[RMDB]
RNA sequence: GGGAACGACUCGAGUAGAGUCGAAAAGUUAACACCUUCGGGUGUUAACAAAUAAGGGAAGUCGAGAGCAAAAAGCACAGUCUACCCAAGACAAAACGACAAAAACAUCUCCCUUCGGGGAGAUGAACAUGGCAUUAUUCUUCGGAAUAAUGCCAUGAAAAGAAACAACAACAACAAC
Reactivity to DMS in 0.01 (KOAc 150mM, MgCl2 10mM, bicine 150mM(pH8.5), 24C), signal-to-noise 1, nucleotides 027 to 126: g010u000u000a010a000c000a000c000c000u000u000c290g080g040g030u010g010u030u020a000a000c000a010a120a090u000a120a080g010g000g110a120a130g010u000c000g040a100g000a060g000c010a050a010a090a090a150g000c000a080c110a130g000u000c030u000a040c020c020c000a140a050g020a060c020a010a040a030a200c060g020a020c030a050a100a070a110a170c000a000u010c000u000c000c020c000u000u000c110g040g000g010g000a000g010a000u000g000a030a130
Reactivity to 2A3 in 0.01 (KOAc 150mM, MgCl2 10mM, bicine 150mM(pH8.5), 24C), signal-to-noise 1, nucleotides 027 to 126: g000u000u000a000a000c000a030c020c000u040u060c230g070g010g010u000g000u020u000a000a000c000a000a000a000u120a040a020g070g000g070a120a060g020u000c020g000a000g010a040g120c040a040a170a190a140a020g040c010a060c030a080g020u000c000u040a060c000c000c000a030a000g030a010c000a010a110a000a020c020g040a000c020a010a100a000a000a000c000a000u000c000u020c000c010c000u000u080c110g060g020g000g000a000g000a000u000g000a000a000